[RMDB]
RNA sequence: GGGAACGACUCGAGUAGAGUCGAAAAUGUUCCGGAUUCGUCCGGAACAAAAUAUGGCACCGGUACUCGUCGAUACAUUGCCACGGAGAUGGACCGGGUGAAAAACCACUUAGUUCGCUAAGUGGAACAAUCUAUAAUACUUCGGUAUUAUAGAUUGAAAAGAAACAACAACAACAAC
Reactivity to 2A3 in 0.01 (KOAc 150mM, MgCl2 10mM, bicine 150mM(pH8.5), 24C), signal-to-noise 4, nucleotides 027 to 126: u030g000u000u010c010c000g000g010a040u050u060c160g050u000c000c000g000g000a010a000c000a000a000a000a010u160a050u050g130g000c050a030c070c020g000g010u040a060c030u040c080g060u010c020g060a040u060a240c050a130u090u280g070c040c010a040c040g070g020a090g010a060u050g030g000a010c000c000g010g020g000u080g030a050a030a000a010a030c000c000a000c000u000u000a000g010u020u040c120g000c130u000a010a000g000u000g000g010a010a000
Reactivity to DMS in 0.01 (KOAc 150mM, MgCl2 10mM, bicine 150mM(pH8.5), 24C), signal-to-noise 9, nucleotides 027 to 126: u000g010u000u000c000c000g000g010a030u000u010c200g020u000c010c000g010g000a010a000c000a020a030a070a080u020a080u010g010g020c060a070c010c010g010g000u000a040c040u000c020g010u000c030g010a190u020a070c130a110u010u000g010c160c110a060c050g000g010a180g000a050u000g010g000a040c010c010g000g010g000u000g000a050a050a070a150a120c010c000a010c000u000u000a010g010u000u010c210g020c000u010a000a010g010u000g000g010a040a080